[RMDB]
RNA sequence: GGGAACGACUCGAGUAGAGUCGAAAAGAUAUGGAGGACCCGAAUCGCGAAGAACUAUACUAAGGCUCUGCUAUUCGGAAACGAAUAGCAGAGCUAUGUAUAGGGAGCGAUAGGGUCCUCCUAAGUCCAGUAUACUGUCGUUCGCGACAGUAUACUGAAAAGAAACAACAACAACAAC
Reactivity to DMS in 0.01 (KOAc 150mM, MgCl2 10mM, bicine 150mM(pH8.5), 24C), signal-to-noise 2, nucleotides 027 to 126: g010a090u000a200u010g010g010a020g000g020a020c000c010c030g000a300a180u000c000g020c010g000a140a180g020a160a190c000u000a030u000a000c000u030a210a300g020g050c020u000c010u010g000c000u000a000u000u010c030g000g010a050a050a130c000g020a010a000u000a010g030c000a000g020a000g040c000u010a000u000g000u000a010u000a000g000g000g000a060g040c000g020a020u000a230g020g010g020u000c000c010u020c050c000u000a000a030g000u000c010
Annotation
The record gives the reactivity of an RNA of 177 nucleotides to DMS. The RNA was probed in 150 mM KOAc, 10 mM MgCl2 and 150 mM bicine (pH 8.5) at 24 C. Values are in units of 0.01, from 0 to 300, in steps of 10. The data come from the RNA Mapping Database (RMDB), library TTRINS.